RNA sequence: GGGAACGACUCGAGUAGAGUCGAAAAACGGUCAUAUACGUAUGACCGAAUGAGCAUAACAGGGCCACCCCAAAGCGUUCACCUUGUGGCCCCUGUCAGAUUCUGGUAAAUCUGCGAGUUCUGCUAAAUUAGGUAACUCUCUUCGGAGAGUUACCAAUCCAUAUGACGUGUUCGCACGUCAUAUGGAAAAAGAAACAACAACAACAAC
Reactivity to DMS in 0.01 (KOAc 150mM, MgCl2 10mM, bicine 150mM(pH8.5), 24C), signal-to-noise 1, nucleotides 027 to 156: a110c030g000g000u000c000a010u000a060u000a090c270g000u000a040u030g000a000c000c000g000a030a030u020g010a130g010c080a100u010a080a090c020a040g030g020g050c010c040a050c020c010c000c010a030a020a140g030c040g010u000u000c070a050c040c030u000u000g000u000g020g000c120c000c000c030u000g010u020c040a070g010a040u000u010c040u000g000g010u010a080a020a050u000c010u000g000c030g010a250g000u000u010c160u010g000c020u010a020a040a120u000u010a120g020g020u000a000a020c000u010c000u000c010u010u000c300g060g010a030g010a070g040u000u000a010c000c010a030a010
Reactivity to 2A3 in 0.01 (KOAc 150mM, MgCl2 10mM, bicine 150mM(pH8.5), 24C), signal-to-noise 2, nucleotides 027 to 156: a010c020g000g000u000c030a010u020a000u010a060c240g140u020a020u010g000a000c010c000g030a000a110u160g010a000g020c010a020u020a110a050c030a050g010g010g000c020c010a030c030c040c010c050a030a120a050g090c020g030u110u120c080a130c120c000u040u060g010u010g000g000c000c010c000c010u040g040u030c000a000g020a050u090u000c000u190g080g070u090a020a050a030u000c010u000g010c020g030a040g070u080u030c020u040g000c000u050a060a140a140u160u080a080g000g000u000a000a000c000u000c000u010c010u050u020c060g030g000a020g000a000g000u000u000a000c000c000a000a000